RNA sequence: GGGAACGACUCGAGUAGAGUCGAAAACUGGUCCACCAGGUCAGGACAGACACUGGGACACAUGUGGCCCAACUUGGAAUGGGGCCACACCCUAGAUCAGCUGACCGUCUCAGAAGCCUCUGGGCUACUGAUGGUACCUGUUCGCAGGUACCAUCAGAAAAGAAACAACAACAACAAC
Reactivity to DMS in 0.01 (KOAc 150mM, MgCl2 10mM, bicine 150mM(pH8.5), 24C), signal-to-noise 3, nucleotides 027 to 126: c050u000g020g000u020c050c060a120c100c070a070g030g040u000c050a050g000g000a070c170a060g000a070c080a090c040u000g000g010g010a120c110a120c300a120u000g000u000g000g010c000c000c000a030a090c120u010u010g020g010a160a130u000g000g000g000g000c000c010a010c000a010c090c020c030u000a030g000a200u000c040a090g000c070u000g000a020c030c030g000u000c100u000c060a080g020a120a100g000c040c020u010c220u010g000g000g030c040u010a120
Reactivity to 2A3 in 0.01 (KOAc 150mM, MgCl2 10mM, bicine 150mM(pH8.5), 24C), signal-to-noise 3, nucleotides 027 to 126: c030u050g070g010u020c030c020a040c040c060a090g000g030u010c010a000g040g090a140c030a070g030a010c050a050c140u030g030g040g050a010c080a000c010a150u090g000u000g010g010c020c000c000a040a100c070u100u180g110g170a170a080u130g050g020g010g010c010c000a000c000a000c000c010c000u030a040g030a120u050c020a000g040c030u030g020a020c010c030g050u020c010u000c020a130g030a140a030g060c000c050u030c100u260g090g010g000c010u080a060
Chemical mapping of a 177-nucleotide RNA with DMS and 2A3. For 2A3, 3,417 sequencing reads were counted. The RNA was probed in 150 mM KOAc, 10 mM MgCl2 and 150 mM bicine (pH 8.5) at 24 C. The DMS profile rests on 1,982 reads.